Chemical mapping of a 177-nucleotide RNA with 2A3 and DMS. For 2A3, 4,451 sequencing reads were counted. The DMS profile rests on 4,527 reads. Source: RMDB library OK2TRN, as collected in RNAgym. The reactions ran in a buffer of 150 mM KOAc, 10 mM MgCl2 and 150 mM bicine (pH 8.5), at 24 C.
RNA sequence: GGGAACGACUCGAGUAGAGUCGAAAACUAGCGCGGCCCUGCGCGUACAGGCCAUCUGCGCUCGUGCGCCAGGCCAUCGAUCGAGCAGCGCUGAUCAGUACUCGUACUGUGCGCCAUCGGCGCGAGGCAUUGCAAGUGCUUUCGAGCACUUGCAAUGAAAAGAAACAACAACAACAAC
Reactivity to 2A3 in 0.01 (KOAc 150mM, MgCl2 10mM, bicine 150mM(pH8.5), 24C), signal-to-noise 3, nucleotides 027 to 126: c010u060a030g010c020g010c030g050g000c080c000c030u060g010c090g000c000g070u020a000c010a030g000g040c050c020a190u120c160u230g070c120g000c120u050c040g010u000g000c010g000c010c000a010g000g020c000c000a040u060c040g070a060u020c020g040a020g120c100a010g000c020g000c040u030g030a130u090c020a000g010u030a040c030u060c200g050u030a040c000u040g030u070g030c020g010c020c020a130u110c060g020g000c000g010c010g030a030g060g000
Reactivity to DMS in 0.01 (KOAc 150mM, MgCl2 10mM, bicine 150mM(pH8.5), 24C), signal-to-noise 4, nucleotides 027 to 126: c040u000a090g010c020g010c070g000g020c140c030c070u000g020c220g020c020g020u000a010c010a060g020g000c000c020a240u010c280u000g000c130g020c000u010c060g020u000g000c020g010c000c040a030g000g010c030c010a050u020c090g010a080u000c040g010a070g020c130a170g010c020g020c020u000g010a070u000c020a050g010u010a020c040u010c300g020u000a030c000u000g010u000g020c040g000c010c080a150u000c040g010g020c000g000c000g010a050g000g000